Annotation
This 177-nucleotide RNA was probed chemically with DMS and 2A3. For DMS, 1,095 sequencing reads were counted.
[RMDB]
RNA sequence: GGGAACGACUCGAGUAGAGUCGAAAAAAAAAUCCUAGCGAACGAACGAGCGAAGCAAGCAAGCAAGCAAGGAACCAACCAAGGAAUUCGCUUUUAUAACUACUCGAGAAUUUUUCGCUUAAAAAAACGUUAAUAUACAGUUCGCUGUAUAUUAACGAAAAGAAACAACAACAACAAC
Reactivity to DMS in 0.01 (KOAc 150mM, MgCl2 10mM, bicine 150mM(pH8.5), 24C), signal-to-noise 1, nucleotides 027 to 126: a020a060a120a100a030u020c000c020u000a020g010c050g000a040a010c060g000a150a040c100g000a100g020c000g000a030a110g020c060a040a030g000c060a090a050g000c070a020a110g020c060a030a030g000g000a090a060c090c070a040a070c080c150a050a070g000g000a040a170u040u000c060g020c060u000u000u000u000a060u030a050a090c030u000a020c020u000c000g000a000g030a050a120u020u000u000u000u000c000g010c120u010u000a000a000a060a020a000a000a100
Reactivity to 2A3 in 0.01 (KOAc 150mM, MgCl2 10mM, bicine 150mM(pH8.5), 24C), signal-to-noise 2, nucleotides 027 to 126: a000a000a000a000a000u030c010c010u000a000g000c030g050a010a050c000g040a030a000c030g020a010g060c020g030a080a000g020c010a010a010g030c000a050a000g030c030a010a060g020c040a050a050g050g020a030a030c050c030a010a020c060c020a090a070g060g010a060a100u020u010c010g020c000u110u070u090u030a170u040a100a050c010u040a020c010u000c010g040a060g070a070a050u050u050u030u080u090c020g000c100u140u170a050a210a020a000a000a000a000
2A3 adducts were read by reverse transcription with SuperScript II with manganese.